[RMDB]
RNA sequence: GGGAACGACUCGAGUAGAGUCGAAAAGAUAUGGAAGGUGGCAAGGAAUGCGAUCGGAAACGAUCGUAGAUUUCUGAUGACCCACUUCCUAAGUCAAAAUCUUACUCAAGUUCGCUUGAGUAAGAAAGCUAAAUGACUUGUUCGCAAGUCAUUUAGCAAAAGAAACAACAACAACAAC
Reactivity to 2A3 in 0.01 (KOAc 150mM, MgCl2 10mM, bicine 150mM(pH8.5), 24C), signal-to-noise 2, nucleotides 027 to 126: g010a010u000a000u130g000g020a030a000g140g030u070g060g000c050a050a020g010g020a000a010u010g030c030g000a010u010c000g010g040a050a050a050c000g000a010u000c000g010u010a020g030a120u030u030u000c010u040g100a190u220g080a160c020c000c000a030c000u010u000c000c000u010a150a000g060u030c020a000a030a000a300u020c010u020u000a000c000u010c010a020a000g020u040u080c120g100c180u000u010g010a000g010u000a000a000g000a000a000a000
Reactivity to DMS in 0.01 (KOAc 150mM, MgCl2 10mM, bicine 150mM(pH8.5), 24C), signal-to-noise 3, nucleotides 027 to 126: g000a040u000a300u000g000g000a020a020g000g010u010g000g040c070a120a130g000g000a020a050u000g010c000g000a020u000c000g000g000a110a050a150c010g000a010u000c000g010u000a020g010a160u000u010u010c010u000g030a160u040g000a190c300c010c020a040c020u010u000c010c000u010a040a200g010u000c040a090a050a100a100u000c010u000u000a000c010u010c010a000a010g000u000u010c300g000c000u000u000g000a020g000u000a020a000g010a030a050a080